Structure probing data (DMS and 2A3) for a 177-nucleotide construct.
Reactivities are given for positions 27 through 126.
It was measured as part of the RMDB library OK1LIB.
2A3 adducts were read by reverse transcription with SuperScript II with manganese.

RNA sequence: GGGAACGACUCGAGUAGAGUCGAAAAACAAUCGGGAUUUGCGGUGCUGCUGUUUCAAGAUAUUGCGGUGAUCCCCAUGUUGGCACUGCUGCCAAUCCUCGCUGGAAACAGCAGUGGCGAUUGGCUGGCCACCAAAAUGAUUCGUCAUUUUGGUGGCAAAAGAAACAACAACAACAAC
Reactivity to DMS in 0.01 (KOAc 150mM, MgCl2 10mM, bicine 150mM(pH8.5), 24C), signal-to-noise 1, nucleotides 027 to 126: a090c100a100a110u070c040g000g010g000a080u000u040u000g040c030g030g000u000g000c000u010g000c040u010g010u000u000u000c030a070a120g020a040u010a160u000u000g000c020g000g000u000g000a110u000c010c010c000c050a070u010g020u000u000g000g000c050a150c060u040g020c090u000g000c010c020a000a030u000c010c000u000c010g000c000u000g000g020a060a070a140c030a000g000c000a030g010u000g000g010c300g030a060u000u000g000g000c080u000g000
Reactivity to 2A3 in 0.01 (KOAc 150mM, MgCl2 10mM, bicine 150mM(pH8.5), 24C), signal-to-noise 4, nucleotides 027 to 126: a000c060a020a080u090c020g020g030g040a130u090u090u210g080c060g040g040u080g040c030u010g020c000u010g060u020u060u070c010a040a020g020a120u110a090u160u210g000c070g040g020u080g040a150u120c000c010c040c010a070u120g060u050u070g090g000c080a020c080u050g070c060u030g010c000c010a010a010u060c020c020u030c030g020c030u040g070g010a050a040a000c010a010g010c000a010g040u020g060g000c000g010a010u030u030g010g000c020u030g010